[RMDB]
This 177-nucleotide RNA was probed chemically with 2A3 and DMS. For 2A3, 2,378 sequencing reads were counted. DMS adducts were read by reverse transcription with MarathonRT.
RNA sequence: GGGAACGACUCGAGUAGAGUCGAAAAUGAAGAAAAUGUAAGGCCCAGGUGAGAAAAGCAUGGUGUGCAAGUACCAAGGAUCAGUGCUUUCCUUCCACAUGAAUGCUGUUAUGGCUGACCCUGAGAAGGAAUCGAGAAUAUUCGUAUUCUCGAUUCCAAAAGAAACAACAACAACAAC
Reactivity to 2A3 in 0.01 (KOAc 150mM, MgCl2 10mM, bicine 150mM(pH8.5), 24C), signal-to-noise 3, nucleotides 027 to 126: u110g030a040a130g080a040a100a040a040u160g030u070a060a070g080g000c070c050c060a030g030g040u110g030a120g010a000a150a010a000g030c010a020u070g000g010u080g060u040g070c050a030a050g040u050a030c030c050a010a030g080g000a030u050c030a060g040u030g050c010u000u040u030c010c030u020u000c010c000a030c020a070u130g180a140a010u060g010c000u010g040u170u080a130u190g060g000c010u010g040a040c020c010c000u050g030a070g010a130a030
Reactivity to DMS in 0.01 (KOAc 150mM, MgCl2 10mM, bicine 150mM(pH8.5), 24C), signal-to-noise 3, nucleotides 027 to 126: u020g000a130a130g000a060a060a090a070u010g000u000a100a130g000g000c070c030c060a060g020g010u020g010a060g010a040a070a060a090g000c040a030u000g010g020u010g030u000g000c120a080a050g000u000a050c060c080a110a060g000g010a060u010c070a090g010u010g000c030u000u000u000c010c020u000u000c070c020a090c090a040u000g000a050a070u010g000c040u000g000u000u020a060u010g000g010c030u010g000a160c040c010c020u000g000a140g000a120a120